Annotation:
The record gives the reactivity of an RNA of 177 nucleotides to DMS and 2A3. Reactivities are given for positions 27 through 126. Conditions: 150 mM KOAc, 10 mM MgCl2 and 150 mM bicine (pH 8.5), 24 C.

RNA sequence: GGGAACGACUCGAGUAGAGUCGAAAAGAUAUGGAGGUUGCUGUGAACUACAAGUGCCAAUCGGAAACGAUUGGCCUUGCACAGUUUCGAACCUCCUAAGUCAAACCAGGUCGUUCGCGACCUGGAAGUAGAUAUGUUGGUUCGCCAACAUAUCUACAAAAGAAACAACAACAACAAC
Reactivity to DMS in 0.01 (KOAc 150mM, MgCl2 10mM, bicine 150mM(pH8.5), 24C), signal-to-noise 6, nucleotides 027 to 126: g010a040u000a300u000g010g000a020g020g010u000u000g000c020u000g020u000g000a060a030c070u010a300c010a010a000g010u010g020c000c000a000a000u000c000g010g000a130a100a270c010g010a020u010u000g010g000c000c000u000u000g000c010a030c070a020g010u000u000u000c130g000a020a010c000c000u000c000c000u000a020a070g000u000c030a130a140a300c000c000a000g000g020u000c000g020u000u020c280g030c020g000a020c000c000u000g000g000a010a080
Reactivity to 2A3 in 0.01 (KOAc 150mM, MgCl2 10mM, bicine 150mM(pH8.5), 24C), signal-to-noise 6, nucleotides 027 to 126: g030a020u080a060u140g000g000a000g010g010u040u050g050c040u030g030u050g050a090a080c070u270a050c300a030a010g030u120g300c010c000a000a000u000c000g030g030a100a050a060c010g000a000u000u000g000g000c000c000u020u010g000c000a000c000a000g000u030u080u170c080g020a010a010c000c000u000c000c000u010a070a010g020u000c040a030a040a140c000c000a000g000g000u000c000g020u060u110c300g020c010g160a000c000c000u000g000g000a010a030
For 2A3 the reverse transcriptase was SuperScript II with manganese. For DMS, 8,441 sequencing reads were counted.